[RMDB]
RNA sequence: GGGAACGACUCGAGUAGAGUCGAAAAAUUGUCGGUGUUCCAUCCCUGCGAAUUUAUCUGCGUCAUGUUCUCCCAAACAUUGCGGGACCACUUAUCGUUCAGAUCACUUUGAACUUCCCCGAAAUCAGAUAGGUCCUCCUUUCGAGGAGGACCUAUCAAAAGAAACAACAACAACAAC
Reactivity to DMS in 0.01 (KOAc 150mM, MgCl2 10mM, bicine 150mM(pH8.5), 24C), signal-to-noise 1, nucleotides 027 to 126: a120u050u000g000u000c090g000g000u040g050u000u010c000c040a260u020c070c020c050u080g020c070g000a010a160u000u010u030a060u050c040u070g020c000g030u050c130a000u000g030u010u000c150u000c030c040c000a000a020a020c090a080u000u040g000c080g000g000g050a040c170c000a100c070u000u000a130u000c020g010u000u000c020a020g030a080u000c100a040c080u090u000u000g040a050a070c050u000u000c000c000c000c050g020a120a030a150u120c010a090
Reactivity to 2A3 in 0.01 (KOAc 150mM, MgCl2 10mM, bicine 150mM(pH8.5), 24C), signal-to-noise 3, nucleotides 027 to 126: a000u200u120g030u090c070g000g000u070g090u060u000c050c000a070u060c000c020c010u020g060c050g110a150a130u150u090u040a080u080c040u060g010c010g070u060c050a020u030g010u020u040c030u050c030c020c020a000a030a000c070a050u110u150g000c000g010g000g100a040c030c000a080c020u080u110a090u190c030g010u020u020c010a020g000a060u100c010a030c090u000u100u080g020a060a040c000u010u040c000c000c000c000g060a000a020a120u160c050a030